RNA sequence: GGGAACGACUCGAGUAGAGUCGAAAAGUCGAAGUGGUUAUAACGGCGUAACAGGCCUUCUCUCAAGGAGGGUUAUGCGCCGUGAUUCCAUGGAAUAAGGAGCGUUUAGGGGCCAGGUUAUUAAGCGUUAAACGUUAAAUUUCGAUUUAACGUUUAAAAAAGAAACAACAACAACAAC
Reactivity to 2A3 in 0.01 (KOAc 150mM, MgCl2 10mM, bicine 150mM(pH8.5), 24C), signal-to-noise 9, nucleotides 027 to 126: g090u070c030g030a090a010g010u010g020g050u130u050a070u040a180a010c000g000g010c010g010u010a130a020c020a090g050g030c010c000u000u010c040u000c010u030c050a040a040g030g010a000g000g020g010u040u040a050u100g000c000g000c000c000g000u010g000a000u010u000c000c000a010u040g010g070a030a030u130a100a060g090g010a040g040c040g020u050u070u120a040g000g000g000g010c010c010a010g010g030u050u010a090u080u090a060a020g040c030g020
Reactivity to DMS in 0.01 (KOAc 150mM, MgCl2 10mM, bicine 150mM(pH8.5), 24C), signal-to-noise 9, nucleotides 027 to 126: g010u010c060g010a200a170g010u000g000g000u010u010a040u010a150a010c000g000g000c000g020u000a040a090c210a170g000g000c000c000u000u000c000u000c070u060c300a140a300g000g000a010g000g000g010u000u000a070u010g000c010g000c000c000g010u000g000a080u010u000c010c010a010u010g000g000a100a080u030a080a090g000g000a060g010c060g010u000u010u010a080g010g000g000g010c060c040a040g000g000u000u010a070u010u010a070a100g010c120g010

Background: Structure probing data (2A3 and DMS) for a 177-nucleotide construct. 2A3 adducts were read by reverse transcription with SuperScript II with manganese. High DMS reactivity at an A or C suggests that its Watson-Crick edge is free. It was measured as part of the RMDB libraries RFM100 and RFMREP. For DMS the reverse transcriptase was MarathonRT.